[RMDB]
RNA sequence: GGGAACGACUCGAGUAGAGUCGAAAAUGAUGAUACGAGUCCGGUGCGCGCUCCCGCGACACUUCCCGAUGGGGAUGAUCAUCCCGAGUAUGGAAGCGUGGUCGCGAGUCGUGACCUCAGAGCUUAUUUGACACACGGACCCGGGGCUUUUUGUUCCUACUUAGUGAGAGUUCGCUCUCACUAAGUAAAAAGAAACAACAACAACAAC
Reactivity to DMS in 0.01 (KOAc 150mM, MgCl2 10mM, bicine 150mM(pH8.5), 24C), signal-to-noise 1, nucleotides 027 to 156: u000g000a090u020g010a240u010a080c000g020a080g000u000c020c000g010g000u020g020c040g050c050g000c010u000c010c000c000g130c020g030a140c020a030c020u010u000c000c000c030g020a220u000g010g010g010g020a020u000g030a230u010c080a160u000c010c000c000g000a060g030u020a160u010g010g000a020a010g020c020g030u030g020g000u000c000g000c000g000a030g000u000c020g020u010g020a090c010c060u010c080a150g000a120g010c130u000u020a090u020u010u000g030a150c010a220c020a070c000g000g020a040c020c020c020g040g000g040g030c040u000u000u000u000u010g030u000u000c020c020
Reactivity to 2A3 in 0.01 (KOAc 150mM, MgCl2 10mM, bicine 150mM(pH8.5), 24C), signal-to-noise 3, nucleotides 027 to 156: u090g030a020u050g010a020u030a100c020g010a010g000u000c060c000g000g040u020g010c030g020c020g020c080u050c050c020c000g000c000g000a000c020a010c030u020u000c010c010c010g030a100u140g040g000g000g010a020u070g100a130u230c100a010u020c020c000c000g000a060g020u250a150u180g000g000a010a020g020c140g240u120g150g040u000c000g000c010g010a030g010u060c010g020u030g080a120c040c000u040c020a070g020a010g030c030u190u110a110u160u210u120g090a040c030a010c010a010c060g010g030a010c000c010c030g000g020g080g050c130u110u130u080u210u210g020u010u020c010c000
The record gives the reactivity of an RNA of 207 nucleotides to DMS and 2A3. Source: RMDB library OK3TST, as collected in RNAgym. DMS adducts were read by reverse transcription with MarathonRT. The reactions ran in a buffer of 150 mM KOAc, 10 mM MgCl2 and 150 mM bicine (pH 8.5), at 24 C. For 2A3 the reverse transcriptase was SuperScript II with manganese.